[RMDB]
RNA sequence: GGGAACGACUCGAGUAGAGUCGAAAAAACUCACUGAGAACACAGCAUUAGCGAACACUGAACCGUUGUUCCUGGGGGGAAAACAGGGUUAGGUUCCUACAAGCCUCUGGUCACAACAUUUCCAUUAACCAGUCAAUACAUAGCAUAGUUUUAUGUACGAGAAGGGAUAGUUCGCUAUCCCUUCUCGAAAAGAAACAACAACAACAAC
Reactivity to 2A3 in 0.01 (KOAc 150mM, MgCl2 10mM, bicine 150mM(pH8.5), 24C), signal-to-noise 1, nucleotides 027 to 156: a000a000c020u050c050a090c030u050g000a020g010a130a000c030a010c020a040g120c050a120u100u110a060g030c040g040a030a000c060a030c020u150g030a020a050c060c070g010u070u070g000u030u000c020c000u040g000g000g000g000g000g000a030a000a000a000c010a060g010g000g020u010u050a010g010g020u060u080c030c000u100a060c170a040a020g060c000c010u030c010u030g000g040u040c060a060c010a200a000c030a120u130u070u000c010c020a040u000u160a000a040c020c000a000g050u080c010a020a020u040a070c010a030u140a010g010c010a090u170a160g010u080u030u040u010a040u010g020u020a110